[RMDB]
RNA sequence: GGGAACGACUCGAGUAGAGUCGAAAACACGUUCAGGUACACUAACAUAUGAAGCAGUGCACCAAUUGACUGAAGAAGGUAUUGGUCAAACUACAGCUGUUGGUAUUGGUGGAGACCCAGUCAACGGACGGAUUAAAGAAUUCGUUCUUUAAUCCGUAAAAGAAACAACAACAACAAC
Reactivity to 2A3 in 0.01 (KOAc 150mM, MgCl2 10mM, bicine 150mM(pH8.5), 24C), signal-to-noise 5, nucleotides 027 to 126: c060a010c030g030u070u060c050a040g030g010u050a020c020a010c040u060a130a020c030a100u180a030u240g090a080a020g020c050a010g030u010g030c050a000c010c000a040a070u080u080g130a070c010u030g030a050a080g100a070a030g130g010u090a060u040u060g030g000u020c020a070a090a070c080u120a060c070a040g040c030u030g010u110u050g050g000u060a080u090u090g040g000u030g020g030a050g000a030c020c000c010a020g060u060c020a040a000c000g010g020
Reactivity to DMS in 0.01 (KOAc 150mM, MgCl2 10mM, bicine 150mM(pH8.5), 24C), signal-to-noise 9, nucleotides 027 to 126: c060a110c080g010u010u000c110a100g010g020u000a060c040a040c040u000a070a080c110a090u010a100u010g010a110a080g020c090a040g010u000g010c120a050c020c030a050a080u000u000g020a070c020u000g000a090a100g010a130a060g010g010u000a060u000u000g010g000u000c050a060a060a080c090u000a050c120a080g000c040u000g000u010u000g000g010u000a090u000u010g010g010u000g010g000a110g000a090c060c020c020a080g010u010c070a030a050c130g000g000
Chemical mapping of a 177-nucleotide RNA with 2A3 and DMS. Reactivities are given for positions 27 through 126. The DMS profile rests on 16,455 reads. For 2A3, 15,032 sequencing reads were counted.